[RMDB]
RNA sequence: GGGAACGACUCGAGUAGAGUCGAAAAUAACGUACUUUCGAGUACGUUAAGUCUCCCGGCGCUAGCAGGGGUGAAGAGAAGAUGGAGGAGCUGGUGGUGGAAUUAGGGGGGGAUUCGUCCCCCCCAAACUCUAGACGAAAUUCGUUUCGUCUAGAGUAAAAGAAACAACAACAACAAC
Reactivity to DMS in 0.01 (KOAc 150mM, MgCl2 10mM, bicine 150mM(pH8.5), 24C), signal-to-noise 6, nucleotides 027 to 126: u000a000a010c000g000u000a000c000u000u000u010c160g010a030g020u000a000c000g010u000u000a010a080g000u010c120u000c000c020c020g020g020c080g020c090u000a050g020c080a080g000g000g000g010u000g010a090a080g000a090g000a060a070g000a080u010g000g000a080g000g000a080g010c060u000g000g020u000g000g020u000g000g010a080a090u010u010a100g010g000g000g010g020g020g000a030u000u010c150g000u000c000c000c000c000c010c000c000a000a010
Reactivity to 2A3 in 0.01 (KOAc 150mM, MgCl2 10mM, bicine 150mM(pH8.5), 24C), signal-to-noise 1, nucleotides 027 to 126: u040a000a000c010g010u010a000c000u070u000u070c190g040a020g010u030a010c020g020u000u000a010a010g030u030c040u010c020c000c020g030g020c070g000c090u090a050g030c060a060g010g060g040g010u090g080a040a020g080a020g010a100a020g050a050u100g000g050a060g030g000a030g030c050u070g030g030u040g020g050u060g030g060a110a100u100u080a270g000g000g000g000g000g000g000a000u030u000c030g050u000c030c000c040c000c040c010c000a010a010